[RMDB]
Annotation
An RNA of 177 nucleotides, treated with DMS and read out base by base. DMS adducts were read by reverse transcription with MarathonRT.
RNA sequence: GGGAACGACUCGAGUAGAGUCGAAAAACAGCGGAAGAUGUGACAGCACCCUUAGUGGAUGAGGGAGCUCCCGGCAAGCAGGCUGCCGCGCAGCCCCACACGGAGAUCCCAGAAGGAACCACAGCUGAUGUUCGACAGCUUUCGAGCUGUCGAACAUAAAAGAAACAACAACAACAAC
Reactivity to DMS in 0.01 (KOAc 150mM, MgCl2 10mM, bicine 150mM(pH8.5), 24C), signal-to-noise 1, nucleotides 027 to 126: a120c060a120g030c090g020g010a120a070g000a020u020g040u000g000a120c080a070g010c000a210c050c070c000u000u020a170g010u000g080g000a070u000g010a200g020g000g000a030g000c020u000c020c080c040g000g000c000a090a160g020c200a070g000g010c010u000g020c000c180g000c200g000c040a020g020c060c020c070c020a110c090a070c190g020g010a060g000a050u000c010c010c010a120g000a060a130g000g010a170a030c020c010a000c070a030g000c130u010g000